[RMDB]
RNA sequence: GGGAACGACUCGAGUAGAGUCGAAAAACUCAAGCUCCUCAGAAUGAUAACACAGAGACCGGAGGAGGGCCAGUGCAGUAGGACUCCCACUGAGCUUGUUUAGCUUGUGUUAGCACUACGAGGUUACUACACCGGAACAUUUCGAUGUUCCGGUGUAAAAAGAAACAACAACAACAAC
Reactivity to DMS in 0.01 (KOAc 150mM, MgCl2 10mM, bicine 150mM(pH8.5), 24C), signal-to-noise 3, nucleotides 027 to 126: a080c000u020c060a180a160g020c070u000c010c010u000c010a100g000a210a140u000g010a080u000a030a050c100a060c010a070g020a160g000a130c090c130g000g000a170g010g010a030g010g000g000c040c000a080g000u000g000c240a140g020u040a050g020g020a300c010u000c000c080c030a050c040u010g010a080g000c000u020u010g000u030u080u020a100g000c060u000u000g000u000g000u000u000a000g010c020a000c090u000a130c090g000a040g000g000u010u030a100c140
Reactivity to 2A3 in 0.01 (KOAc 150mM, MgCl2 10mM, bicine 150mM(pH8.5), 24C), signal-to-noise 3, nucleotides 027 to 126: a000c020u030c020a030a050g050c020u050c020c000u020c010a020g050a120a050u060g040a020u040a010a000c000a010c000a040g090a020g040a300c100c080g100g020a050g040g030a080g000g010g000c010c030a050g030u070g060c070a090g050u200a040g020g130a070c040u010c040c010c000a030c040u030g030a040g000c000u000u070g010u110u280u170a020g000c030u020u020g000u000g000u020u010a020g030c010a000c000u050a000c050g010a010g090g000u020u050a040c020
Chemical mapping of a 177-nucleotide RNA with DMS and 2A3. The DMS profile rests on 2,721 reads. The reactions ran in a buffer of 150 mM KOAc, 10 mM MgCl2 and 150 mM bicine (pH 8.5), at 24 C. Reactivities are given for positions 27 through 126. For 2A3 the reverse transcriptase was SuperScript II with manganese. The data come from the RNA Mapping Database (RMDB), library OK1LIB. For 2A3, 2,141 sequencing reads were counted.